[RMDB]
RNA sequence: GGGAACGACUCGAGUAGAGUCGAAAACAGCAUAUAUGCGGUGAAUUAUGCGGUGUCAUAGGAAUUGAGGAUUUAUGUAAGAUGCUGAUAAUGAGUAAGGAACCUUAAAGUUAAUCGUUCCCUGUCUAAGUCAUCCACAUUUCGAUGUGGAUGACUUAAAAGAAACAACAACAACAAC
Reactivity to 2A3 in 0.01 (KOAc 150mM, MgCl2 10mM, bicine 150mM(pH8.5), 24C), signal-to-noise 1, nucleotides 027 to 126: c000a050g100c030a000u020a000u000a000u100g100c100g050g010u060g010a120a060u270u000a080u120g060c070g000g010u020g030u080c000a000u130a100g000g060a070a090u030u060g020a000g070g000a050u010u060u040a170u190g060u020a000a000g000a060u040g000c000u010g000a000u040a040a020u120g000a000g000u040a000a060g000g000a000a010c000c010u070u070a160a090a000g020u110u090a050a070u070c000g030u040u000c000c000c020u010g120u040c050u070
Reactivity to DMS in 0.01 (KOAc 150mM, MgCl2 10mM, bicine 150mM(pH8.5), 24C), signal-to-noise 2, nucleotides 027 to 126: c050a140g010c060a040u010a070u000a160u000g000c040g030g080u030g000a120a010u070u000a030u000g000c020g040g000u030g000u000c000a020u000a050g020g040a160a040u040u000g020a110g000g010a110u000u020u000a030u000g000u000a020a110g000a040u000g000c000u000g020a100u020a050a050u000g000a110g010u030a090a090g040g000a060a030c070c070u000u050a050a070a090g010u000u010a080a140u000c010g000u000u000c010c000c010u040g000u010c120u000
Structure probing data (2A3 and DMS) for a 177-nucleotide construct. The reactions ran in a buffer of 150 mM KOAc, 10 mM MgCl2 and 150 mM bicine (pH 8.5), at 24 C. Reactivities are rounded to 0.1 and cut off at 0 and 3. For 2A3 the reverse transcriptase was SuperScript II with manganese. For 2A3, 1,121 sequencing reads were counted. DMS adducts were read by reverse transcription with MarathonRT.